[RMDB]
RNA sequence: GGGAACGACUCGAGUAGAGUCGAAAAGGGGUCGCUUGAGAGAGCGCCGUGACUUUUGACGCUCUGAAGCCUCCACGGAGCGAUAAGUCACGGAACUACGCUCCCAAGAUGAGGCGACGGAGGCACCCAAACGCGAGUCUGUUCGCAGACUCGCGAAGAUAGAAGGGCAGUUCGCUGCCCUUCUAUCAAAAGAAACAACAACAACAAC
Reactivity to 2A3 in 0.01 (KOAc 150mM, MgCl2 10mM, bicine 150mM(pH8.5), 24C), signal-to-noise 1, nucleotides 027 to 156: g000g000g000g000u130c010g100c050u040u150g080a190g010a020g000a040g180c000g020c010c040g030u000g020a020c000u030u100u170u300g200a130c040g000c000u020c000u030g020a120a020g080c050c000u020c000c000a010c000g000g010a000g030c020g030a130u080a280a070g000u020c020a000c110g000g000a000a010c110u180a010c020g000c000u000c000c000c000a090a000g150a270u170g000a050g090g080c070g060a000c030g040g000a220g010g000c000a000c020c020c000a010a070a290c030g000c000g000a010g020u000c000u000g040u050u120c190g040c080a000g000a000c000u000c000g000c000g000a030a030